[RMDB]
RNA sequence: GGGAACGACUCGAGUAGAGUCGAAAACUGUCUCUUGAGAAGGACAAACCGAGCAACAUGUUCAAAUUGAGCAAGGACAUUCAGCGCCUGGACAUGGAACCUGUUGGACUUCAAAGCAGGGAGGAUACACCCCAGCACGCUUCGGCGUGCUGGGGUGAAAAGAAACAACAACAACAAC
Reactivity to 2A3 in 0.01 (KOAc 150mM, MgCl2 10mM, bicine 150mM(pH8.5), 24C), signal-to-noise 1, nucleotides 027 to 126: c000u180g110u020c000u000c000u000u080g190a070g000a030a000g040g040a000c140a000a240a000c020c030g000a140g300c000a000a000c000a000u000g000u000u030c000a130a300a300u150u140g000a300g300c130a020a060g070g050a100c030a260u300u290c020a300g080c030g030c270c000u000g000g000a000c000a000u030g000g000a000a030c000c000u000g000u060u000g000g000a000c000u000u000c060a000a000a220g000c000a000g020g000g000a000g060g000a000u020a020
This 177-nucleotide RNA was probed chemically with 2A3.
2A3 adducts were read by reverse transcription with SuperScript II with manganese.
Source: RMDB library OK1LIB, as collected in RNAgym.